[RMDB]
RNA sequence: GGGAACGACUCGAGUAGAGUCGAAAAGCAUUAAGAGAGUACUCUUAUUCCCACAACGUUGGUGACAACGUUGAUUUUCCGGUGGCCACCCGCCCGGGCCACCGUUACUCCACUCCACUCCUUCGGGACUGGUUUGGAGGAACAAUGUAGGGCUAAAAAAUGCUAGUAGGUUCGCCUACUAGCAUUUAAAAGAAACAACAACAACAAC
Reactivity to 2A3 in 0.01 (KOAc 150mM, MgCl2 10mM, bicine 150mM(pH8.5), 24C), signal-to-noise 1, nucleotides 027 to 156: g080c030a060u130u110a070a000g010a010g030a050g230u210a210c000u010c000u010u010a000u000u000c000c000c030a000c000a000a000c000g010u030u000g040g020u080g060a030c040a030a010c020g000u000u020g010a030u120u100u020u020c070c000g040g010u000g000g000c010c010a030c030c180c040g030c000c000c000g000g000g000c000c000a000c010c000g000u010u050a010c000u000c000c010a000c010u000c000c010a000c010u010c000c000u020u110c150g020g000g000a000c040u020g000g000u000u000u010g030g000a000g000g000a000a060c060a030a050u280g050u230a080g000g000g000c010u010a000a000a000
Source information
This 207-nucleotide RNA was probed chemically with 2A3. The 2A3 profile rests on 685 reads. It was measured as part of the RMDB library OK3TST. The reactions ran in a buffer of 150 mM KOAc, 10 mM MgCl2 and 150 mM bicine (pH 8.5), at 24 C.